[RMDB]
RNA sequence: GGGAACGACUCGAGUAGAGUCGAAAACAUUGCAGCUUCGGCUGCAAUGAAUCUCUGGUCUCUACGACUCUACUCGAUUGAGGCUGGAGUAGUCGUUCCCGAUGGCGCCCCAAUUCGUUGGGGCGAACACACAAUAAUCAUUCGUGAUUAUUGUGUGAAAAGAAACAACAACAACAAC
Reactivity to 2A3 in 0.01 (KOAc 150mM, MgCl2 10mM, bicine 150mM(pH8.5), 24C), signal-to-noise 5, nucleotides 027 to 126: c000a000u000u000g000c000a010g010c000u060u100c210g190g000c000u000g000c000a000a000u000g000a000a010u030c060u010c040u100g060g030u030c030u010c030u110a080c050g000a000c000u000c000u010a010c000u000c010g010a020u010u030g010a010g010g000c030u060g040g080a080g060u120a000g000u000c000g000u000u000c000c000c000g000a030u050g100g060c020g000c000c000c000c010a010a010u060u050c150g060u050u020g000g000g000g000c000g000a000a000
Reactivity to DMS in 0.01 (KOAc 150mM, MgCl2 10mM, bicine 150mM(pH8.5), 24C), signal-to-noise 3, nucleotides 027 to 126: c020a010u000u010g000c000a010g010c000u000u020c220g030g000c000u000g000c000a000a000u000g010a110a080u010c060u000c060u000g010g000u000c020u010c050u010a140c050g010a010c000u000c010u000a000c010u000c000g020a050u010u000g000a050g000g000c030u000g010g010a120g020u010a040g010u000c000g010u000u000c000c000c000g010a030u000g000g010c010g000c000c000c000c000a010a030u000u010c170g010u000u000g010g000g010g020c000g010a010a050
An RNA of 177 nucleotides, treated with 2A3 and DMS and read out base by base. Reactivities are given for positions 27 through 126. It was measured as part of the RMDB library M2PK50. 2A3 adducts were read by reverse transcription with SuperScript II with manganese. For 2A3, 25,674 sequencing reads were counted. Conditions: 150 mM KOAc, 10 mM MgCl2 and 150 mM bicine (pH 8.5), 24 C. The DMS profile rests on 7,508 reads.